Source: RMDB library OK3TST, as collected in RNAgym. Structure probing data (DMS and 2A3) for a 207-nucleotide construct. DMS adducts were read by reverse transcription with MarathonRT. Conditions: 150 mM KOAc, 10 mM MgCl2 and 150 mM bicine (pH 8.5), 24 C.
[RMDB]
RNA sequence: GGGAACGACUCGAGUAGAGUCGAAAACUUGAGGUCAGGAGUUCGAGACCAGCCUUGCCAACAAGGCAAAAUCCUGUCUCUACAAAAAAUACAAAAAUAAGCUGGGUGUGGUGGUAUGUGCCUGUAAUCCCAGCUACUUGGGAGGCUGAGACAUGAGUACCUAUUAGUCAUUCGUGACUAAUAGGUAAAAAGAAACAACAACAACAAC
Reactivity to DMS in 0.01 (KOAc 150mM, MgCl2 10mM, bicine 150mM(pH8.5), 24C), signal-to-noise 2, nucleotides 027 to 156: c030u000u000g020a090g010g000u000c020a020g000g000a060g030u000u000c040g020a100g000a080c030c010a170g010c010c020u010u000g020c080c170a100a140c070a090a110g000g040c010a040a040a070a050u000c010c000u010g000u000c010u000c010u010a170c040a000a000a070a050a110a100u030a130c060a040a060a050a060a110u010a080a080g010c040u000g010g000g040u000g020u010g010g060u010g010g040u000a060u010g010u000g020c010c010u000g000u000a070a080u000c010c010c000a020g000c010u000a000c020u010u000g020g000g000a060g040g030c000u000g000a090g000a050c060a050u000g010a150g010
Reactivity to 2A3 in 0.01 (KOAc 150mM, MgCl2 10mM, bicine 150mM(pH8.5), 24C), signal-to-noise 3, nucleotides 027 to 156: c030u070u110g020a030g030g040u120c030a020g070g050a060g040u260u300c080g040a020g030a100c030c010a010g000c010c000u040u020g060c050c060a070a140c050a110a160g000g030c030a030a040a000a000u000c000c010u000g000u010c010u000c000u060a060c120a000a070a050a020a000a060u140a050c030a010a170a060a030a040u130a150a000g000c010u000g020g000g020u040g020u020g060g040u060g000g050u160a080u200g060u150g020c030c000u040g060u170a010a030u070c000c000c010a000g000c000u000a000c010u010u040g020g000g000a000g000g000c000u030g010a010g010a030c050a100u110g030a050g070
For DMS, 4,253 sequencing reads were counted.
Reactivities are rounded to 0.1 and cut off at 0 and 3.